[RMDB]
RNA sequence: GGGAACGACUCGAGUAGAGUCGAAAAGCUUGCUAGAAGUGAAUUAGUGGCGCACGGGUGAGUAAGGUAUAGUUAAUCUGCCCUACACUGGGGGACAACACUUAGAAAUGAGUGCUAAUACCCCAUACUAGAGAGAAAGAUUCGUCUUUCUCUCUAGAAAAGAAACAACAACAACAAC
Reactivity to DMS in 0.01 (KOAc 150mM, MgCl2 10mM, bicine 150mM(pH8.5), 24C), signal-to-noise 9, nucleotides 027 to 126: g010c050u000u000g020c040u010a040g020a130a110g010u000g010a080a070u020u010a050g020u010g000g010c070g010c050a040c070g010g010g010u010g000a070g010u020a050a060g010g010u010a050u020a070g010u010u020a070a110u010c050u020g010c010c000c020u010a060c160a090c220u000g000g000g000g000g010a110c210a130a130c010a000c000u000u000a010g000a070a070a150u000g000a010g010u000g000c040u010a090a090u020a190c010c000c000c010a030u020a100
Reactivity to 2A3 in 0.01 (KOAc 150mM, MgCl2 10mM, bicine 150mM(pH8.5), 24C), signal-to-noise 9, nucleotides 027 to 126: g020c010u040u080g020c030u060a050g030a200a050g140u050g090a100a100u080u060a090g030u030g050g010c020g010c020a020c040g030g020g020u080g040a050g020u050a070a040g060g020u090a070u090a120g070u050u070a070a050u040c030u050g040c000c000c000u030a030c060a030c080u040g000g000g000g000g000a000c020a050a000c000a020c000u010u010a020g070a030a080a040u100g000a010g000u000g000c000u010a020a020u060a130c000c000c000c000a000u030a010

Chemical mapping of a 177-nucleotide RNA with DMS and 2A3. Conditions: 150 mM KOAc, 10 mM MgCl2 and 150 mM bicine (pH 8.5), 24 C.